[RMDB]
RNA sequence: GGGAACGACUCGAGUAGAGUCGAAAAAAUGGUACGCAAAGUGAAAUGCAAUCAAUGGUUAAAGUUAUUGAUGACUACCAUAUACCUAUAAUUACAAUUACUAGUACAAGGGAUAAUCCCGUAGCACCUCAUUCGAUACAUUCGUGUAUCGAAUGAGAAAAGAAACAACAACAACAAC
Reactivity to DMS in 0.01 (KOAc 150mM, MgCl2 10mM, bicine 150mM(pH8.5), 24C), signal-to-noise 4, nucleotides 027 to 126: a090a030u000g010g010u000a020c150g020c060a030a070a090g030u000g000a090a120a100u000g010c000a200a030u000c040a040a030u000g010g020u010u020a060a080a080g010u010u010a060u010u000g000a060u010g010a100c220u000a030c020c020a030u010a080u000a090c030c000u000a070u000a110a060u010u000a070c050a080a110u010u020a070c120u000a040g010u000a020c280a070a110g000g000g010a090u000a080a120u010c010c010c010g020u020a070g020c110a060c160
Reactivity to 2A3 in 0.01 (KOAc 150mM, MgCl2 10mM, bicine 150mM(pH8.5), 24C), signal-to-noise 4, nucleotides 027 to 126: a000a020u060g010g000u040a010c110g000c040a010a060a080g070u180g140a130a110a130u080g010c030a020a010u010c000a010a010u020g050g060u130u180a200a100a030g050u080u050a060u030u070g030a020u070g020a030c020u000a010c010c010a000u020a010u030a070c000c000u050a060u090a280a150u120u070a030c030a050a110u180u050a120c060u050a040g090u040a050c030a110a100g000g000g030a040u080a190a040u180c000c000c000g000u000a010g010c000a030c010